The data come from the RNA Mapping Database (RMDB), libraries RFM100 and RFMREP. Chemical mapping of a 177-nucleotide RNA with 2A3 and DMS.

[RMDB]
RNA sequence: GGGAACGACUCGAGUAGAGUCGAAAAAGUGGACCAUACGUGGUCCACACUGAUGAUGAUCCUUCCCCUCAACUGAGAGGUGAUGAGCACACCGGUAGGCUGAGGUACGCGGUGUACGCACCGCGAAAAGUUUCAGAGAGUUCGCUCUCUGAAACUUAAAAGAAACAACAACAACAAC
Reactivity to 2A3 in 0.01 (KOAc 150mM, MgCl2 10mM, bicine 150mM(pH8.5), 24C), signal-to-noise 7, nucleotides 027 to 126: a000g010u010g000g000a000c010c000a010u030a050c300g080u040g000g000u010c010c000a000c000a000c000u070g060a100u060g020a050u060g030a050u060c000c020u020u120c010c010c000c010u010c000a030a050c020u050g040a040g010a020g210g020u010g020a140u120g060a040g070c030a000c000a010c050c000g030g020u030a020g030g000c020u010g010a010g010g030u040a020c020g000c000g010g000u020g010u010a040c210g010c070a000c000c000g000c000g000a030a020
Reactivity to DMS in 0.01 (KOAc 150mM, MgCl2 10mM, bicine 150mM(pH8.5), 24C), signal-to-noise 4, nucleotides 027 to 126: a050g010u010g000g010a000c020c000a040u010a090c220g050u000g010g000u000c000c000a000c010a030c110u030g000a120u020g010a100u030g000a150u010c070c060u000u020c040c080c000c010u010c010a030a060c010u000g000a140g010a060g000g010u010g010a100u020g010a130g000c220a070c000a010c000c000g000g010u000a250g000g010c040u000g020a020g010g030u030a090c040g020c000g000g000u000g010u020a050c170g000c000a000c000c010g030c000g010a030a060